Background
Chemical mapping of a 207-nucleotide RNA with 2A3 and DMS. The RNA was probed in 150 mM KOAc, 10 mM MgCl2 and 150 mM bicine (pH 8.5) at 24 C. For 2A3 the reverse transcriptase was SuperScript II with manganese. The data come from the RNA Mapping Database (RMDB), library OK3TST.
[RMDB]
RNA sequence: GGGAACGACUCGAGUAGAGUCGAAAAAAGAUGAUAGAAACAACAUUGGAUGAGUAUGUAGACUUAGAAGGAACCAUCAUAGUUGCAUGUCAGAGCCACGAUGCCGUUGAUCUACUAGGUAACUCCAUGACACACUUACAGGCUUCAAGAAUUGUGCUAGCAGAGAUAUGUUCGCAUAUCUCUGCUAAAAAGAAACAACAACAACAAC
Reactivity to 2A3 in 0.01 (KOAc 150mM, MgCl2 10mM, bicine 150mM(pH8.5), 24C), signal-to-noise 4, nucleotides 027 to 156: a000a000g070a030u090g010a010u060a110g120a050a140a020c060a080a010c020a070u050u100g050g010a030u040g010a070g030u090a040u150g080u060a020g040a080c020u080u040a020g050a090a020g090g010a030a010c070c000a050u080c050a020u030a120g040u040u060g000c020a040u060g030u110c040a010g000a030g070c000c030a050c090g030a020u070g030c030c010g030u020u050g020a030u030c010u070a040c010u040a050g080g000u010a030a040c010u000c030c010a020u030g030a000c010a010c020a000c080u030u140a010c010a060g020g030c000u050u060c040a040a030g060a040a070u070u080g040u100g020c040
Reactivity to DMS in 0.01 (KOAc 150mM, MgCl2 10mM, bicine 150mM(pH8.5), 24C), signal-to-noise 3, nucleotides 027 to 156: a100a110g000a140u010g000a130u000a060g020a100a070a080c050a090a040c030a100u000u000g000g000a080u010g010a100g020u000a050u010g010u010a060g010a060c070u010u010a090g020a110a090g010g020a060a080c050c040a100u000c040a080u010a110g010u010u000g020c040a070u000g000u000c050a090g030a140g020c020c010a060c050g000a070u010g030c000c010g010u000u000g010a080u010c050u000a090c050u010a060g030g030u000a040a040c020u000c010c020a070u010g000a090c030a080c020a050c010u000u010a030c060a060g020g000c010u000u030c050a070a090g000a050a100u010u010g030u000g010c070